[RMDB]
RNA sequence: GGGAACGACUCGAGUAGAGUCGAAAAGAAGACGUGACGAAAAGUCACGUCAAUACAGAGACUACGCACCUCUGAAAAACACAACAAAAGUGUAAAAGCGUAGCAGGAUCGAGAGAUCCUGAAAAGAACCACGGUAAUCAUUCGUGAUUACCGUGGUAAAAGAAACAACAACAACAAC
Reactivity to 2A3 in 0.01 (KOAc 150mM, MgCl2 10mM, bicine 150mM(pH8.5), 24C), signal-to-noise 4, nucleotides 027 to 126: g190a100a020g000a000c000g000u000g010a000c030g060a120a170a080a070g000u000c000a000c010g000u000c000a000a010u070a000c010a000g000a000g010a010c000u000a000c000g010c030a180c030c010u000c000u010g030a040a000a010a010a000c070a030c060a180a020c070a110a140a110a040g010u030g030u060a060a100a020a030g010c010g000u000a000g010c000a000g000g010a000u000c000g020a010g000a000g000a100u000c000c000u000g000a000a000a000a000g090a000
Reactivity to DMS in 0.01 (KOAc 150mM, MgCl2 10mM, bicine 150mM(pH8.5), 24C), signal-to-noise 4, nucleotides 027 to 126: g000a290a090g000a020c000g020u000g030a010c000g010a080a070a140a170g000u000c010a010c000g000u010c000a030a090u010a230c040a020g000a010g010a130c000u000a020c010g000c040a150c210c010u030c000u000g010a070a030a100a170a070c010a000c000a070a150c300a100a040a090a120g010u000g020u000a000a030a050a110g000c000g000u000a010g000c000a000g000g010a000u000c010g020a260g000a120g000a000u000c000c000u000g000a040a030a090a050g000a210